The record gives the reactivity of an RNA of 207 nucleotides to 2A3.

RNA sequence: GGGAACGACUCGAGUAGAGUCGAAAAGAAUAUUAACUUCGGUUAAUAUUCGCUGGUGAAUAUAUUUCAAUGGUAGAAAAUACGCUUGUGGUGCGUUAAAUCUGAGUUCGAUUCUCAGUAUUCACCCCAACUUUCACGCGACUUUCGAGUCGCGUGAGAUCUCCCCCACAUUCGUGUGGGGGAGAUCAAAAGAAACAACAACAACAAC
Reactivity to 2A3 in 0.01 (KOAc 150mM, MgCl2 10mM, bicine 150mM(pH8.5), 24C), signal-to-noise 1, nucleotides 027 to 156: g010a000a000u000a000u010u010a000a000c000u030u090c230g020g000u000u000a010a000u000a000u000u020c010g000c110u060g050g000u010g000a050a000u030a010u000a020u020u120u100c030a020a040u090g120g000u130a020g000a020a050a030a010u070a010c010g020c050u190u160g150u220g100g190u110g010c000g020u020u060a020a090a030u110c030u010g010a010g000u000u010c010g000a030u090u010c000u010c000a000g000u000a020u000u020c020a010c000c010c010c010a030a040c040u060u100u050c000a000c000g000c000g010a000c000u090u090u120c160g020a000g010u000c010g010c010g010u000g000a000
The data come from the RNA Mapping Database (RMDB), library ARCHII. Values cover nucleotides 27 to 156. The 2A3 profile rests on 688 reads.